[RMDB]
RNA sequence: GGGAACGACUCGAGUAGAGUCGAAAAAUAGUGCUUGUGGUCCCGGAGUGUUUGGGAAUUGAGUAGGUGUCGUUUCCUUGGUGGCGAUUAGAGGAGGAAGAUGAGAGGGCUGUCGUCACAGUCGAUUGAUCAACUGUGCUCAUUACCCAAUCGGGAGCAUUGAUGAAGCUUUCGAGCUUCAUCAAUGAAAAGAAACAACAACAACAAC
Reactivity to 2A3 in 0.01 (KOAc 150mM, MgCl2 10mM, bicine 150mM(pH8.5), 24C), signal-to-noise 4, nucleotides 027 to 156: a000u170a010g040u040g040c080u030u040g020u060g030g060u060c010c060c040g030g020a120g040u170g030u040u090u070g030g000g010a080a070u090u100g020a030g030u060a070g010g060u050g010u020c030g010u000u040u050c000c020u000u040g060g000u000g000g010c010g030a050u090u130a070g020a040g060g030a030g030g020a050a070g050a080u140g020a020g030a040g080g040g010c010u030g030u050c030g030u020c010a000c000a020g050u070c050g060a080u010u250g060a070u090c040a010a050c010u040g020u030g060c010u010c000a040u040u170a210c000c000c020a000a040u070c010g000g020g010a030g000
Reactivity to DMS in 0.01 (KOAc 150mM, MgCl2 10mM, bicine 150mM(pH8.5), 24C), signal-to-noise 2, nucleotides 027 to 156: a170u000a090g030u020g000c040u000u000g050u000g030g010u000c010c010c000g040g030a230g030u010g010u010u000u000g030g010g000a090a060u000u020g010a070g030u000a270g020g040u010g000u000c000g030u020u010u010c010c010u000u000g040g030u000g010g020c040g010a090u010u010a090g020a110g000g010a080g010g020a070a100g000a130u010g000a160g030a170g010g020g010c040u010g010u000c050g020u000c020a030c000a080g000u000c040g000a130u010u000g000a160u020c030a090a020c020u000g000u000g000c050u000c030a090u000u000a120c010c010c010a020a150u000c060g000g000g010a150g000